RNA sequence: GGGAACGACUCGAGUAGAGUCGAAAAGAAAGAAGGCGUAAUCGCCGUGUACGAGCUCCACGAUCAAUGAUUUUCUCGCCGUACGGCAUUGAUCGGACGUACCUCGGAUUGCCGCCUUACAAAGUUAAUACUAGAUUAAAUAAACCGUUGCGGCAAAAGUAAUAAAUACUUUCGAGUAUUUAUUACUAAAAGAAACAACAACAACAAC
Reactivity to DMS in 0.01 (KOAc 150mM, MgCl2 10mM, bicine 150mM(pH8.5), 24C), signal-to-noise 2, nucleotides 027 to 156: g010a140a120a170g000a050a050g010g020c010g010u010a080a050u010c030g000c030c000g010u020g040u000a060c010g000a180g000c140u000c020c170a100c000g010a050u010c000a030a030u010g010a110u000u000u000u000c070u000c060g020c070c120g060u010a170c070g020g020c030a020u000u000g030a030u010c010g020g000a170c040g000u000a070c090c010u000c010g010g000a090u000u010g020c060c000g030c000c000u000u000a140c070a070a130a120g000u010u000a050a130u000a120c100u010a140g010a190u060u000a060a060a140u000a070a090a120c060c050g010u000u000g050c010g030g010c030a060a060a120
Reactivity to 2A3 in 0.01 (KOAc 150mM, MgCl2 10mM, bicine 150mM(pH8.5), 24C), signal-to-noise 4, nucleotides 027 to 156: g070a000a150a000g080a020a010g000g000c010g010u030a030a040u070c110g030c080c010g010u010g000u000a000c010g010a050g090c110u080c130c100a090c070g000a010u010c000a000a000u020g080a120u030u090u220u140c130u090c110g000c000c010g000u010a000c000g010g000c000a000u000u000g000a000u000c000g000g000a000c010g000u000a000c000c050u070c050g030g010a020u020u060g080c080c060g010c000c030u000u010a030c020a000a100a010g020u120u160a090a090u060a190c050u060a030g050a140u190u130a170a080a160u130a080a130a000c000c000g010u030u100g000c000g000g000c000a000a000a020
Background: An RNA of 207 nucleotides, treated with DMS and 2A3 and read out base by base. The reactions ran in a buffer of 150 mM KOAc, 10 mM MgCl2 and 150 mM bicine (pH 8.5), at 24 C. Source: RMDB library OK3TST, as collected in RNAgym. DMS adducts were read by reverse transcription with MarathonRT. The DMS profile rests on 3,548 reads. For 2A3 the reverse transcriptase was SuperScript II with manganese.